Source: RMDB library RFM100, as collected in RNAgym. Structure probing data (2A3 and DMS) for a 177-nucleotide construct. High DMS reactivity at an A or C suggests that its Watson-Crick edge is free. For 2A3 the reverse transcriptase was SuperScript II with manganese. Conditions: 150 mM KOAc, 10 mM MgCl2 and 150 mM bicine (pH 8.5), 24 C.
RNA sequence: GGGAACGACUCGAGUAGAGUCGAAAAUAUCAGACUAAUUGAUUGAACUUUAAUUUUCGGAUAAUCCCAUUCUCAGGAAUACGCUUCCUAUAUUUUGGAAUUUGCUAAAUUUCAGGCGGACUAUCAAUCCGCAUUUGAUUUUCGAAUCAAAUGCGGAAAAAGAAACAACAACAACAAC
Reactivity to 2A3 in 0.01 (KOAc 150mM, MgCl2 10mM, bicine 150mM(pH8.5), 24C), signal-to-noise 3, nucleotides 027 to 126: u090a000u030c020a060g040a020c080u090a010a010u020u060g070a020u020u090g100a100a060c020u000u020u100a020a030u010u020u040u000c010g050g000a000u030a020a060u020c000c000c010a060u220u050c160u020c100a000g050g030a000a030u060a090c120g020c060u000u000c000c000u100a070u030a060u230u130u060u090g040g000a070a040u050u020u190g110c070u110a110a110a110u050u050u040c010a010g070g000c010g000g030a050c000u040a030u220c040a060a020
Reactivity to DMS in 0.01 (KOAc 150mM, MgCl2 10mM, bicine 150mM(pH8.5), 24C), signal-to-noise 1, nucleotides 027 to 126: u040a000u000c030a070g000a010c060u080a000a000u000u010g000a000u050u050g050a190a070c200u000u000u000a000a040u000u000u000u000c080g030g030a040u060a030a040u020c000c000c010a130u040u030c140u000c090a110g000g000a090a040u070a050c130g000c120u000u000c020c020u010a150u060a080u000u000u050u070g020g000a020a020u000u000u000g030c060u000a000a040a010u000u000u000c030a050g020g010c000g020g010a040c000u010a070u000c070a020a150